RNA sequence: GGGAACGACUCGAGUAGAGUCGAAAAGCACCCGAGUAGGGCAGCGACGGUGGGCGGCACCUCGUGCGGCACCGGAACCACGCUGGCCCGGUUGACGACGACAUGGGUCGCGAAACCCGAGACGCCGCAGGGACUACUUGUUCGCAAGUAGUCCCUGAAAAGAAACAACAACAACAAC
Reactivity to DMS in 0.01 (KOAc 150mM, MgCl2 10mM, bicine 150mM(pH8.5), 24C), signal-to-noise 3, nucleotides 027 to 126: g000c180a100c040c010c040g030a120g010u020a100g000g010g000c030a010g000c000g010a190c300g000g010u000g000g000g030c050g000g000c000a020c030c150u000c180g010u000g000c030g000g010c020a010c010c000g000g020a130a130c120c140a150c100g020c030u010g000g000c040c000c000g010g000u010u010g000a220c090g010a070c020g010a140c120a060u040g000g000g000u000c020g010c090g000a070a190a050c080c000c010g020a130g000a120c050g000c050c000g020
Reactivity to 2A3 in 0.01 (KOAc 150mM, MgCl2 10mM, bicine 150mM(pH8.5), 24C), signal-to-noise 2, nucleotides 027 to 126: g100c100a040c030c000c020g040a090g120u300a090g000g020g010c030a070g010c080g050a060c060g000g000u030g070g090g210c000g040g050c000a130c080c060u140c100g040u070g120c020g010g000c050a030c020c030g010g000a040a070c010c000a070c030g050c080u240g060g030c000c000c000g000g010u070u150g030a030c040g000a010c000g040a000c030a160u110g060g000g000u020c030g040c010g090a090a000a010c000c000c010g010a020g010a010c050g000c010c000g030

Structure probing data (DMS and 2A3) for a 177-nucleotide construct. The DMS profile rests on 3,560 reads. For DMS the reverse transcriptase was MarathonRT. The reactions ran in a buffer of 150 mM KOAc, 10 mM MgCl2 and 150 mM bicine (pH 8.5), at 24 C.